[RMDB]
RNA sequence: GGGAACGACUCGAGUAGAGUCGAAAAGCAAAGAAAUUUUAUCCCAAUAAGGCGAAGUAAGCAAGUCGACCCAACGCGACGGCGCUAGCGAGCUUACGAGCCCUAGCAGACUAAUAGCGAGAAAAAAGGAUUCAUAACAGUUCGCUGUUAUGAAUCCAAAAGAAACAACAACAACAAC
Reactivity to 2A3 in 0.01 (KOAc 150mM, MgCl2 10mM, bicine 150mM(pH8.5), 24C), signal-to-noise 1, nucleotides 027 to 126: g020c040a050a050a070g200a050a220a010u100u200u010u090a050u100c020c000c020a030a060u110a050a000g010g000c000g010a030a000g050u050a000a040g050c040a060a000g030u060c020g020a140c030c010c010a110a020c050g000c000g000a020c100g020g000c010g040c040u040a000g030c030g020a040g010c000u000u010a030c050g000a020g000c000c000c040u070a000g000c000a000g040a070c010u030a030a100u070a150g010c020g020a100g140a050a140a030a000a000a000
Reactivity to DMS in 0.01 (KOAc 150mM, MgCl2 10mM, bicine 150mM(pH8.5), 24C), signal-to-noise 1, nucleotides 027 to 126: g000c210a030a060a020g010a080a140a140u000u000u000u000a140u010c030c000c010a090a130u010a140a090g010g020c020g010a080a190g010u000a010a020g020c000a090a100g030u000c010g010a130c110c000c000a010a080c040g010c020g020a120c250g000g000c010g010c030u000a190g020c050g000a190g000c020u000u000a020c010g060a300g010c000c000c030u010a030g020c000a080g020a100c070u000a030a020u000a100g010c030g010a100g010a020a040a010a100a070a150